[RMDB]
RNA sequence: GGGAACGACUCGAGUAGAGUCGAAAAUCACUGGCACAAGGAACUGUGGGCAGCAGAGUCUAUAAAUAGGCAACCACCACCUCCCAGACUGCUGGGCACAGUGUUAUAGGGCCAGACCCGUGGGCACUGCUACUGGGAGGCCCAAGGUGACUGGGCACAGCGUUUUAUAGUUCGCUAUAAAACGCUGAAAAGAAACAACAACAACAAC
Reactivity to DMS in 0.01 (KOAc 150mM, MgCl2 10mM, bicine 150mM(pH8.5), 24C), signal-to-noise 2, nucleotides 027 to 156: u000c050a170c010u010g000g050c040a080c030a100a170g000g010a110a050c020u000g020u030g000g030g000c040a010g020c010a080g030a220g000u000c040u000a120u010a050a070a130u000a060g030g010c020a070a110c070c000a140c030c030a140c010c050u000c050c000c020a110g020a250c030u000g010c020u000g010g000g050c010a030c010a020g030u010g000u020u000a120u000a180g030g000g000c000c040a080g000a150c000c020c000g000u000g030g040g050c070a040c080u000g000c000u000a080c040u000g000g020g010a120g010g000c020c030c060a000a080g020g000u000g000a080c030u000g010g020g020c030a300
Reactivity to 2A3 in 0.01 (KOAc 150mM, MgCl2 10mM, bicine 150mM(pH8.5), 24C), signal-to-noise 2, nucleotides 027 to 156: u060c000a010c100u010g020g000c010a020c010a220a090g150g000a100a030c010u040g040u060g030g200g020c000a000g010c010a010g040a010g050u010c040u070a140u100a190a190a140u220a050g050g000c050a130a050c050c040a050c070c000a030c040c000u040c040c010c010a030g040a120c050u060g010c010u040g010g150g000c020a010c000a000g000u000g010u050u070a120u070a130g080g000g000c000c010a010g010a010c000c000c000g040u050g000g000g030c150a110c230u120g030c050u080a080c050u050g010g000g010a000g030g010c000c020c000a010a020g040g010u010g010a020c010u010g000g000g000c090a000